An RNA of 177 nucleotides, treated with 2A3 and read out base by base.

RNA sequence: GGGAACGACUCGAGUAGAGUCGAAAACGGAAGGACGCCAUGGUGAGUCGGCAUAUUCACGUCAUCGGUAUCGGCGCCGGUGAUCCCGACUAUGUGACCGUCCAGGCGAUCAACGCGCUCAAUGACAGCCAUACCGUGCGUUCGCGCACGGUAUGGCAAAAGAAACAACAACAACAAC
Reactivity to 2A3 in 0.01 (KOAc 150mM, MgCl2 10mM, bicine 150mM(pH8.5), 24C), signal-to-noise 2, nucleotides 027 to 126: c040g070g040a060a000g250g020a020c030g050c050c020a290u040g000g000u020g040a160g040u030c070g010g070c000a010u010a020u100u050c020a020c070g040u030c030a000u010c010g010g000u100a070u240c050g060g120c130g130c020c000g000g010u000g000a040u160c000c030c000g000a000c040u040a000u030g060u070g000a000c000c000g020u100c000c000a010g000g000c000g010a010u030c020a040a000c040g000c030g000c080u000c020a120a100u200g060a100c040a060

For 2A3 the reverse transcriptase was SuperScript II with manganese.
The reactions ran in a buffer of 150 mM KOAc, 10 mM MgCl2 and 150 mM bicine (pH 8.5), at 24 C.